[RMDB]
RNA sequence: GGGAACGACUCGAGUAGAGUCGAAAACACAUGCUUCCUUAGAUCCACCUUUGUGGAUGCCCGUCUUGAGCUGAGUUCUACUUGUAAACUUCUGGUUUCUUGUAGUUCCAGUCAAAGAAACAUCCAGGAAACGUGGCAUGUUCGCAUGCCACGUUUCAAAAGAAACAACAACAACAAC
Reactivity to 2A3 in 0.01 (KOAc 150mM, MgCl2 10mM, bicine 150mM(pH8.5), 24C), signal-to-noise 2, nucleotides 027 to 126: c040a000c000a020u070g040c040u030u030c020c010u080u040a050g010a080u080c000c020a020c020c030u150u090u200g080u070g020g000a000u000g010c030c090c010g050u010c040u010u070g020a080g000c000u000g000a010g040u000u000c000u000a000c000u050u000g150u300a000a000a000c000u160u060c090u270g050g000u000u010u000c000u000u000g020u000a030g020u000u000c000c000a000g020u030c070a040a030a060g000a000a020a000c010a020u000c000c000a050g030
Structure probing data (2A3) for a 177-nucleotide construct. Conditions: 150 mM KOAc, 10 mM MgCl2 and 150 mM bicine (pH 8.5), 24 C. It was measured as part of the RMDB library RFM100. For 2A3 the reverse transcriptase was SuperScript II with manganese.